[RMDB]
RNA sequence: GGGAACGACUCGAGUAGAGUCGAAAAGACCGGGAUCCAGGUCGGGUUCGGUUCGCCGUGCCCCUGCUUGCUGGAAUACCAGCGGAUGCCCAACUUGCCGCGCUUGGUGAACGUGGUGAUCGAGUUGGCCACUGGUCGACUUCGGUCGACCAGUGGCAAAAGAAACAACAACAACAAC
Reactivity to 2A3 in 0.01 (KOAc 150mM, MgCl2 10mM, bicine 150mM(pH8.5), 24C), signal-to-noise 1, nucleotides 027 to 126: g060a010c010c020g000g060g000a010u010c000c000a040g050g000u020c010g020g000g080u060u000c000g010g000u030u000c210g000c050c000g000u000g030c000c000c000c000u030g050c120u050u180g030c020u120g200g040a210a190u150a300c000c000a000g000c050g000g000a060u300g020c000c000c000a010a010c020u000u090g030c000c000g010c000g110c110u030u100g080g130u260g140a050a030c050g000u000g000g000u030g000a050u150c140g000a000g220u040u040g000
Background:
Structure probing data (2A3) for a 177-nucleotide construct. For 2A3, 456 sequencing reads were counted. Conditions: 150 mM KOAc, 10 mM MgCl2 and 150 mM bicine (pH 8.5), 24 C.